[RMDB]
About this RNA
The data come from the RNA Mapping Database (RMDB), library OK3TST. The record gives the reactivity of an RNA of 207 nucleotides to DMS and 2A3. The RNA was probed in 150 mM KOAc, 10 mM MgCl2 and 150 mM bicine (pH 8.5) at 24 C. High 2A3 reactivity points to a flexible backbone, as in loops and unpaired stretches.
RNA sequence: GGGAACGACUCGAGUAGAGUCGAAAAUUUCGGAUGGCAAUCAAGAUCGAAUCUGGUAUUGUCAAAGCUCUGGCUCUUGACCGGGAGCUGGUUGUAGCCACCGUCAAACCAGCAGCUGUCCAAUGCAUUCGGUGGGCUCCGGAUGCAAGCGGAGCCCCAAUUCACACACAUUCGUGUGUGUGAAUUGAAAAGAAACAACAACAACAAC
Reactivity to DMS in 0.01 (KOAc 150mM, MgCl2 10mM, bicine 150mM(pH8.5), 24C), signal-to-noise 6, nucleotides 027 to 156: u000u000u000c030g010g000a160u010g020g000c020a070a060u000c040a160a060g020a060u000c120g000a040a300u010c020u000g020g030u000a020u000u000g030u000c010a050a170a060g010c010u000c010u000g010g010c010u000c050u000u010g010a050c020c060g040g000g000a180g010c000u000g000g020u000u000g050u000a050g020c010c030a100c010c020g020u000c010a020a030a030c000c030a020g030c080a030g030c000u000g000u000c010c030a050a140u000g010c030a130u010u000c050g010g010u010g010g010g000c020u000c000c000g020g030a130u010g000c100a030a090g010c030g020g010a060g030c010c000c020
Reactivity to 2A3 in 0.01 (KOAc 150mM, MgCl2 10mM, bicine 150mM(pH8.5), 24C), signal-to-noise 3, nucleotides 027 to 156: u090u100u120c030g030g010a020u040g010g000c010a010a030u020c020a050a050g010a050u070c060g130a110a160u020c030u030g030g050u200a030u050u020g010u030c030a100a030a000g000c000u000c000u000g010g000c000u000c010u030u010g010a030c050c130g030g000g020a040g000c010u020g040g020u080u080g090u100a010g000c010c010a050c030c010g000u000c010a130a300a300c010c000a000g000c000a000g000c010u020g020u040c020c020a040a040u070g020c030a030u080u090c040g080g000u020g040g060g010c030u010c020c000g030g020a080u160g090c030a020a020g100c010g000g000a000g000c000c000c000